[RMDB]
RNA sequence: GGGAACGACUCGAGUAGAGUCGAAAAAAGCAGGGUGUGAGAGAAACUCUCUCCCAGCCGGUUCGCGCAGCCACCCUUUUCGACUCUACUGGGGUUAGCUGCGCGAACUGGCUGGCGUUCCCCAGAACUAUACUAGACGAUUCGUCGUCUAGUAUAGAAAAGAAACAACAACAACAAC
Reactivity to DMS in 0.01 (KOAc 150mM, MgCl2 10mM, bicine 150mM(pH8.5), 24C), signal-to-noise 6, nucleotides 027 to 126: a070a060g010c070a050g010g010g020u000g000u010g010a060g010a060g010a150a110a110c110u000c020u000c040u010c070c010c010a010g010c000c000g010g010u000u000c010g010c000g010c000a010g000c000c110a030c010c000c010u000u000u010u000c030g010a030c030u000c020u000a030c130u010g000g000g000g010u000u010a040g010c000u000g010c000g000c000g000a000a000c000u000g000g010c000u000g000g010c000g000u000u000c000c000c000c120a140g000a090a180
Reactivity to 2A3 in 0.01 (KOAc 150mM, MgCl2 10mM, bicine 150mM(pH8.5), 24C), signal-to-noise 3, nucleotides 027 to 126: a000a010g120c060a030g020g010g010u060g020u050g020a040g020a000g030a150a240a140c030u030c000u010c010u040c040c000c020a000g010c000c000g010g000u000u010c000g010c010g000c010a000g020c020c020a010c000c000c010u020u020u050u110c060g020a040c010u010c020u140a060c070u040g010g010g000g010u020u070a000g000c000u000g010c000g000c000g000a000a000c000u000g000g000c000u000g000g010c000g000u000u000c000c010c000c000a030g040a090a010